[RMDB]
Description
An RNA of 177 nucleotides, treated with DMS and read out base by base. For DMS, 8,430 sequencing reads were counted. Conditions: 150 mM KOAc, 10 mM MgCl2 and 150 mM bicine (pH 8.5), 24 C. The data come from the RNA Mapping Database (RMDB), library OK2TRN.
RNA sequence: GGGAACGACUCGAGUAGAGUCGAAAAGCAUGAGUCUCCUGAGGUCAAGGAGUUCUCUGCUGACCAGGAGAAGACGGAGGACAAAUAAAGAAAGGCUGUGUGUGUGCGUGUGCGAGAGAGAGAGAGAUCCCUAAUUGAGUUUCGACUCAAUUAGGGAAAAAGAAACAACAACAACAAC
Reactivity to DMS in 0.01 (KOAc 150mM, MgCl2 10mM, bicine 150mM(pH8.5), 24C), signal-to-noise 6, nucleotides 027 to 126: g010c010a010u010g010a030g010u000c010u000c010c000u000g010a230g020g020u010c190a160a050g010g000a030g010u010u000c010u000c000u000g010c040u000g000a140c030c030a080g010g000a090g000a070a070g010a080c080g000g010a080g000g020a060c100a060a060a100u010a060a060a100g010a080a070a100g010g010c030u000g020u000g020u000g020u010g010u010g010c100g010u000g020u010g010c040g010a060g000a070g000a070g010a070g000a090g000a090g000a120